[RMDB]
RNA sequence: GGGAACGACUCGAGUAGAGUCGAAAACGCAUGCACCCGCAGGCCCGCCAGCAGGCGAAGCCAACGAAGCAGGAAAACCAGCGGCAACAGCGGGAGUUGCCAUGUUUGUGCGCGUCUCUGGAGACUCCCACGCAUAAUACUUCGGUAUUAUGCGUGGAAAAGAAACAACAACAACAAC
Reactivity to 2A3 in 0.01 (KOAc 150mM, MgCl2 10mM, bicine 150mM(pH8.5), 24C), signal-to-noise 4, nucleotides 027 to 126: c050g040c030a040u140g020c020a060c000c010c010g040c020a040g020g010c000c010c020g000c000c020a120g090c050a100g110g000c000g020a060a030g020c010c000a040a040c080g050a080a010g050c040a020g080g090a040a050a000a090c060c020a040g050c030g030g020c010a040a020c020a060g030c030g000g050g000a060g010u030u020g000c000c000a020u110g070u010u060u090g090u060g000c030g010c010g070u010c020u000c010u040g050g010a030g040a060c030u060c040
Reactivity to DMS in 0.01 (KOAc 150mM, MgCl2 10mM, bicine 150mM(pH8.5), 24C), signal-to-noise 4, nucleotides 027 to 126: c080g020c040a170u000g000c090a070c020c010c030g050c030a260g000g000c010c040c000g020c000c030a160g000c220a040g000g000c020g010a110a300g020c000c000a060a090c260g010a060a100g000c040a060g010g000a080a050a060a090c050c060a080g030c160g010g000c000a030a030c020a130g010c030g000g000g010a260g010u000u000g010c000c020a060u010g000u000u000u000g040u010g030c040g020c050g000u000c020u010c040u040g010g000a190g000a110c140u000c070
Structure probing data (2A3 and DMS) for a 177-nucleotide construct.
The reactions ran in a buffer of 150 mM KOAc, 10 mM MgCl2 and 150 mM bicine (pH 8.5), at 24 C.
For DMS, 6,412 sequencing reads were counted.